[RMDB]
RNA sequence: GGGAACGACUCGAGUAGAGUCGAAAAGUGAAGAGUACUUGCCUAGCUAUGUGCUUAAUUGCUGCCAUGACCUCGUGGCAACACAGGAUGGUGCCUUCACAAAACGCGGUGGCCUGUCGUCCGGGGAUAGCCCCUGUUGCUUCGGCAACAGGGGCUAAAAAGAAACAACAACAACAAC
Reactivity to 2A3 in 0.01 (KOAc 150mM, MgCl2 10mM, bicine 150mM(pH8.5), 24C), signal-to-noise 1, nucleotides 027 to 126: g000u010g000a000a000g050a070g000u000a000c000u000u260g130c020c020u040a000g020c040u000a050u300g120u300g090c020u130u160a040a040u210u000g010c010u000g060c000c000a000u060g000a300c050c080u280c140g000u000g020g030c010a000a000c110a000c040a030g030g000a090u030g000g040u020g000c000c000u000u120c000a000c020a020a020a020a020c140g000c020g000g000u070g020g000c000c000u050g020u140c060g110u050c000c000g000g000g000g000a060
Structure probing data (2A3) for a 177-nucleotide construct. For 2A3 the reverse transcriptase was SuperScript II with manganese. It was measured as part of the RMDB library OK1LIB. The 2A3 profile rests on 333 reads.